[RMDB]
RNA sequence: GGGAACGACUCGAGUAGAGUCGAAAAGUCGCGCGCGGCGAGCGGCAACUCGAGCACGUAGCCCGGGCGCAGCGCGGCGAGCUCGGCGAUCGACAGCGACAGCGUGUCGAUCUCGACGUGCACGGGAUAAAAUAUCACUGUUCGCAGUGAUAUUUUAAAAAGAAACAACAACAACAAC
Reactivity to DMS in 0.01 (KOAc 150mM, MgCl2 10mM, bicine 150mM(pH8.5), 24C), signal-to-noise 9, nucleotides 027 to 126: g010u000c010g020c020g010c040g010c050g010g010c030g000a080g020c040g000g010c080a100a090c020u000c020g010a130g020c090a080c070g020u000a110g010c110c010c010g010g000g010c020g020c040a070g010c010g010c030g020g010c020g010a090g010c040u000c010g000g010c120g000a020u000c000g000a010c010a140g010c010g010a170c300a120g000c000g010u000g010u000c000g000a010u000c010u000c080g010a040c040g010u000g010c020a140c060g000g000g010a260
Reactivity to 2A3 in 0.01 (KOAc 150mM, MgCl2 10mM, bicine 150mM(pH8.5), 24C), signal-to-noise 7, nucleotides 027 to 126: g030u010c010g000c000g000c010g010c040g130g020c030g030a050g050c030g020g000c020a020a100c010u030c030g050a050g050c070a020c140g030u050a020g050c010c020c000g020g080g000c030g000c020a070g000c050g000c000g060g020c010g000a010g000c020u000c020g020g010c080g020a020u020c000g010a010c010a020g000c020g110a140c130a060g030c170g120u080g000u010c000g000a020u000c010u010c010g040a030c020g000u040g010c040a020c070g040g000g010a020
The record gives the reactivity of an RNA of 177 nucleotides to DMS and 2A3. Values cover nucleotides 27 to 126. Conditions: 150 mM KOAc, 10 mM MgCl2 and 150 mM bicine (pH 8.5), 24 C.